The record gives the reactivity of an RNA of 177 nucleotides to DMS and 2A3. For 2A3, 673 sequencing reads were counted. Source: RMDB library M2PK90, as collected in RNAgym. The DMS profile rests on 869 reads. Conditions: 150 mM KOAc, 10 mM MgCl2 and 150 mM bicine (pH 8.5), 24 C.
[RMDB]
RNA sequence: GGGAACGACUCGAGUAGAGUCGAAAAUGAAAUCAAAAUUAGAGAAGUGAAGGCUGAGAUGGUAAUGGUAAUGAUGGUAGGAUAUUGUCACUGGUUUACGGUAACCACCACCACCAAAAUAAAAAAAGAUAGUGUAAUCCUUCGGGAUUACACUAUCAAAAGAAACAACAACAACAAC
Reactivity to DMS in 0.01 (KOAc 150mM, MgCl2 10mM, bicine 150mM(pH8.5), 24C), signal-to-noise 1, nucleotides 027 to 126: u020g000a100a070a110u020c020a040a010a200a080u000u020a050g000a060g040a160a050g020u000g020a100a070g000g000c040u030g010a050g020a030u000g020g000u000a040a060u000g000g060u020a120a100u020g020a040u010g010g020u010a060g010g000a090u000a020u000u010g020u000c050a050c060u010g000g020u010u000u020a080c080g000g000u020a050a070c010c040a010c040c020a090c030c060a070c050c060a050a020a080a030u050a010a000a140a010a040a100a150
Reactivity to 2A3 in 0.01 (KOAc 150mM, MgCl2 10mM, bicine 150mM(pH8.5), 24C), signal-to-noise 1, nucleotides 027 to 126: u050g010a000a000a060u110c060a170a080a050a200u140u250a080g040a010g030a220a000g000u000g040a000a050g020g040c050u020g000a040g000a160u030g000g240u100a130a110u000g040g050u020a040a030u030g070a000u020g040g070u040a170g060g010a030u000a040u080u080g020u000c020a000c110u070g040g030u040u050u100a010c030g030g020u040a020a000c020c000a000c010c000a000c000c000a000c030c010a040a060a090a100u230a020a160a030a000a000a000a000